[RMDB]
Structure probing data (DMS and 2A3) for a 177-nucleotide construct.
RNA sequence: GGGAACGACUCGAGUAGAGUCGAAAACGCGACAUAUGGAAGCUCAACGAUGCUCAGGUCGCGCUGUACCGCGAGUUCCGCGCCGCCACCGACCGUAGCCUGGACACCAUGGCCCGCGCCGACAUGCACCUACUUACAUGUUCGCAUGUAAGUAGGUAAAAGAAACAACAACAACAAC
Reactivity to DMS in 0.01 (KOAc 150mM, MgCl2 10mM, bicine 150mM(pH8.5), 24C), signal-to-noise 9, nucleotides 027 to 126: c040g010c020g010a030c020a090u010a110u010g010g000a120a070g020c030u000c080a120a150c240g010a060u010g020c020u000c030a110g010g010u000c020g010c030g010c040u000g020u000a130c060c010g020c080g010a100g010u010u010c050c030g020c090g010c040c050g010c040c030a070c070c030g000a050c070c050g010u000a090g010c040c030u000g010g010a080c080a080c060c040a060u000g010g010c010c030c040g010c080g010c030c040g010a070c120a060u010g010c170
Reactivity to 2A3 in 0.01 (KOAc 150mM, MgCl2 10mM, bicine 150mM(pH8.5), 24C), signal-to-noise 3, nucleotides 027 to 126: c020g010c010g020a010c020a050u300a140u190g170g060a140a040g010c010u030c070a160a220c160g110a090u210g000c000u010c040a020g060g000u020c000g010c010g000c030u040g040u080a060c000c030g030c040g050a040g060u090u060c030c010g010c030g000c020c010g030c020c010a040c010c030g050a020c000c020g040u030a010g020c000c020u030g030g020a040c010a020c050c020a050u080g040g000c010c010c010g020c020g000c020c010g040a060c020a040u120g020c020
For 2A3, 32,270 sequencing reads were counted.